[RMDB]
RNA sequence: GGGAACGACUCGAGUAGAGUCGAAAAGAUAUGGACGUAGCAACAGCGUCCAGUCGGAAACGACUGUGACGACAUGCUACUGUCCUAAGUCAAAAGAUACAUUACCUCUUCGGAGGUAAUGUAUCAAGAACUUAGUAAACUUCGGUUUACUAAGUUCAAAAGAAACAACAACAACAAC
Reactivity to DMS in 0.01 (KOAc 150mM, MgCl2 10mM, bicine 150mM(pH8.5), 24C), signal-to-noise 6, nucleotides 027 to 126: g000a020u000a140u010g000g000a010c010g010u000a000g010c000a020a140c300a120g010c020g010u000c000c000a010g000u000c000g000g000a040a040a070c000g010a010c000u010g000u020g020a010c000g020a150c100a120u000g000c000u000a000c000u010g030u000c000c000u000a000a060g000u000c010a100a090a140a110g000a010u000a000c000a000u000u000a000c000c000u000c000u000u010c190g020g000a010g000g000u000a000a010u000g010u000a000u000c010a070a090
Reactivity to 2A3 in 0.01 (KOAc 150mM, MgCl2 10mM, bicine 150mM(pH8.5), 24C), signal-to-noise 5, nucleotides 027 to 126: g010a000u020a020u070g000g000a000c000g000u000a000g000c010a010a170c160a250g130c010g000u000c000c000a000g000u000c010g010g000a030a020a010c020g020a000c020u050g210u300g070a000c020g120a150c040a050u010g000c000u000a000c020u030g000u000c000c000u000a010a000g020u010c020a010a010a040a220g000a000u000a010c000a000u010u000a000c010c000u020c020u080u110c300g120g010a000g000g000u000a000a000u000g000u000a000u000c000a000a000